[RMDB]
RNA sequence: GGGAACGACUCGAGUAGAGUCGAAAAGUCCUGCCAUGAGACCGCAACGAGAGCAUGUCGCAUCGAAUGGACUCGGGGAGUCGGCAGCUUGCCCCACGGAUGCGCGCCUAAUGCCGGCAUUCGGGAAAAUAGACUGGAUAGUUCGCUAUCCAGUCAACAAGAACUCAGAGUUCGCUCUGAGUUCUUGAAAAGAAACAACAACAACAAC
Reactivity to DMS in 0.01 (KOAc 150mM, MgCl2 10mM, bicine 150mM(pH8.5), 24C), signal-to-noise 1, nucleotides 027 to 156: g000u000c020c020u010g000c030c030a160u000g000a110g010a030c010c080g060c010a190a190c050g010a120g000a240g020c030a080u030g020u000c060g030c080a070u010c030g020a150a210u010g000g000a100c030u000c010g030g040g000g010a070g020u000c010g020g020c010a080g020c030u000u000g000c010c010c000c030a050c040g020g000a050u000g000c000g040c110g040c050c040u000a180a130u000g040c030c080g040g000c000a040u000u000c000g000g020g020a040a030a070a160u000a170g010a040c010u000g000g000a050u000a020g040u000u000c300g000c010u010a010u000c000c000a000g020u010c000a040a080
Reactivity to 2A3 in 0.01 (KOAc 150mM, MgCl2 10mM, bicine 150mM(pH8.5), 24C), signal-to-noise 4, nucleotides 027 to 156: g030u030c010c010u010g030c020c000a090u130g100a010g010a110c010c020g020c090a050a070c090g030a020g010a020g110c030a060u110g090u240c030g010c090a090u130c110g040a020a060u040g000g040a050c000u030c050g030g010g010g020a110g040u060c050g020g000c020a020g020c020u070u080g070c000c020c020c000a040c000g000g000a000u010g030c220g020c020g040c080c070u280a300a080u270g060c070c000g050g000c010a010u030u030c000g000g010g060a050a030a000a070u110a050g000a000c000u000g010g000a000u000a000g010u040u050c150g010c150u000a000u000c000c010a020g000u000c000a000a000
The record gives the reactivity of an RNA of 207 nucleotides to DMS and 2A3. The RNA was probed in 150 mM KOAc, 10 mM MgCl2 and 150 mM bicine (pH 8.5) at 24 C. For 2A3 the reverse transcriptase was SuperScript II with manganese. Reactivities are rounded to 0.1 and cut off at 0 and 3. It was measured as part of the RMDB library M2RFPK. Reactivities are given for positions 27 through 156.